[RMDB]
RNA sequence: GGGAACGACUCGAGUAGAGUCGAAAAUUAAUUUUUAGUUUAGUUUAAGUUAGUUUAGAGUAGGUAUAAAGAUGCCAGUGCCGGGGCCACGCGGAGUACGAUCGAGGGUACAGCACUAGGACGCCCAGUGUUCUUUAGUCUUCGGACUAAAGAACACAAAAGAAACAACAACAACAAC
Reactivity to 2A3 in 0.01 (KOAc 150mM, MgCl2 10mM, bicine 150mM(pH8.5), 24C), signal-to-noise 1, nucleotides 027 to 126: u000u000a020a100u020u000u040u040u120a100g040u070u050u160a070g060u010u120u040a010a040g000u040u000a000g000u030u000u120a030g010a040g060u260a200g060g110u180a130u170a070a080a040g070a030u190g000c000c000a010g000u000g050c000c000g020g000g040g000c030c000a000c000g020c000g030g000a010g000u280a020c020g020a060u020c030g040a060g000g040g000u000a000c000a000g000c000a000c010u070a060g010g080a000c000g000c000c000c000a000
Reactivity to DMS in 0.01 (KOAc 150mM, MgCl2 10mM, bicine 150mM(pH8.5), 24C), signal-to-noise 1, nucleotides 027 to 126: u010u000a000a000u000u000u000u000u030a050g020u040u030u030a140g010u000u000u000a010a060g010u000u000a020g010u000u000u000a150g000a070g000u010a010g000g000u010a080u020a020a050a010g000a300u080g000c000c000a000g010u000g000c010c040g120g010g000g020c000c010a010c050g020c010g030g000a160g000u040a020c030g030a060u040c040g000a030g010g000g010u000a000c000a010g000c000a050c020u010a090g000g010a020c080g030c010c000c040a120